[RMDB]
Conditions: 150 mM KOAc, 10 mM MgCl2 and 150 mM bicine (pH 8.5), 24 C.
The record gives the reactivity of an RNA of 207 nucleotides to 2A3.
2A3 is a SHAPE reagent: it acylates the 2'-hydroxyl of flexible nucleotides of all four kinds.
Values cover nucleotides 27 to 156.
The 2A3 profile rests on 474 reads.
RNA sequence: GGGAACGACUCGAGUAGAGUCGAAAAUUCUCAGAAUCCAGCGAGAGGCGUGGAGAGAGGGCCGCGGUGCUCUGGAGUAGAGGCUCUGCCUUCGAAACACCAUCGAUCGUCCCUUCUUCUUUUCCUUCUUCUGGCUCUUCCGAUGAGACGCGACCGGCCUCCUGUGAAAGUUCGCUUUCACAGGAGGAAAAGAAACAACAACAACAAC
Reactivity to 2A3 in 0.01 (KOAc 150mM, MgCl2 10mM, bicine 150mM(pH8.5), 24C), signal-to-noise 1, nucleotides 027 to 156: u030u000c000u010c010a000g010a000a020u300c000c000a000g040c000g090a000g000a000g000g040c090g150u190g080g000a020g000a000g040a030g000g000g020c000c030g070c030g010g000u010g000c000u030c010u000g000g000a000g020u000a010g000a000g030g000c080u120c170u300g040c040c000u180u280c040g000a060a000a000c000a000c050c050a000u030c000g080a300u010c000g000u000c000c000c000u000u030c000u000u010c000u000u050u090u070c010c000u000u070c000u000u050c040u000g000g000c010u020c000u000u010c000c020g090a130u160g010a010g010a030c120g040c080g100a090c060c010g000g000